[RMDB]
An RNA of 177 nucleotides, treated with DMS and 2A3 and read out base by base. DMS adducts were read by reverse transcription with MarathonRT.

RNA sequence: GGGAACGACUCGAGUAGAGUCGAAAACGUCGUGAACUAGCGACAAUGCAUUAGGUCCAUCGUUAUCUAACCGAAACAUCGUGACUAGUGUUAGAAUAGAACCAAGAGAGGGCGCUGGCAAACAAAGACGGAGUGGAUUAUUCGUAGUCCGCUCCGUAAAAGAAACAACAACAACAAC
Reactivity to DMS in 0.01 (KOAc 150mM, MgCl2 10mM, bicine 150mM(pH8.5), 24C), signal-to-noise 9, nucleotides 027 to 126: c110g010u010c030g010u010g010a140a120c110u020a100g000c020g010a040c050a110a090u030g000c050a060u010u010a060g000g000u010c020c020a090u010c080g010u010u010a090u000c020u010a050a060c110c050g000a090a070a090c070a080u030c140g010u020g000a070c050u010a060g010u020g010u000u000a040g010a040a110u020a050g010a070a100c070c060a070a060g000a100g000a090g000g000g000c020g010c020u000g010g000c040a050a080a070c120a070a070a100g010
Reactivity to 2A3 in 0.01 (KOAc 150mM, MgCl2 10mM, bicine 150mM(pH8.5), 24C), signal-to-noise 9, nucleotides 027 to 126: c060g000u000c010g020u030g080a130a080c060u030a070g010c000g020a020c000a010a050u090g010c020a020u010u080a040g040g040u010c010c010a050u030c070g030u030u050a110u060c020u020a010a050c030c020g040a040a050a010c040a100u160c080g100u120g080a040c050u050a030g020u010g000u100u020a010g010a030a040u080a050g060a040a020c040c020a060a000g040a000g020a060g030g020g000c010g000c010u000g000g000c000a030a040a010c030a020a090a010g080
About this RNA
For 2A3, 43,853 sequencing reads were counted. Values cover nucleotides 27 to 126. For 2A3 the reverse transcriptase was SuperScript II with manganese.